The record gives the reactivity of an RNA of 177 nucleotides to DMS.
DMS adducts were read by reverse transcription with MarathonRT.
The reactions ran in a buffer of 150 mM KOAc, 10 mM MgCl2 and 150 mM bicine (pH 8.5), at 24 C.
RNA sequence: GGGAACGACUCGAGUAGAGUCGAAAAGGUUGAUGCACAUCAAUGUUAAGUAGAAUAAAUCUGAAGUCAGCACCAUCACCCAUUGUUCUUCUUGGCUCCCACAGAGUGCAAUGAUGAUCUGCUCAAAUGCUACACUGUGGUUCGCCACAGUGUAGCAAAAAGAAACAACAACAACAAC
Reactivity to DMS in 0.01 (KOAc 150mM, MgCl2 10mM, bicine 150mM(pH8.5), 24C), signal-to-noise 2, nucleotides 027 to 126: g000g020u010u000g000a080u020g010c090a060c120a060u000c040a050a030u000g020u010u000a080a100g020u000a050g000a120a060u010a050a050a100u020c110u030g020a080a160g000u000c070a060g000c080a050c060c070a070u000c040a070c060c080c040a100u000u000g000u000u010c020u000u000c020u020u000g000g010c060u000c030c000c020a140c060a040g010a030g000u000g000c050a040a060u010g000a090u000g000a020u020c050u000g020c030u000c050a070a040a090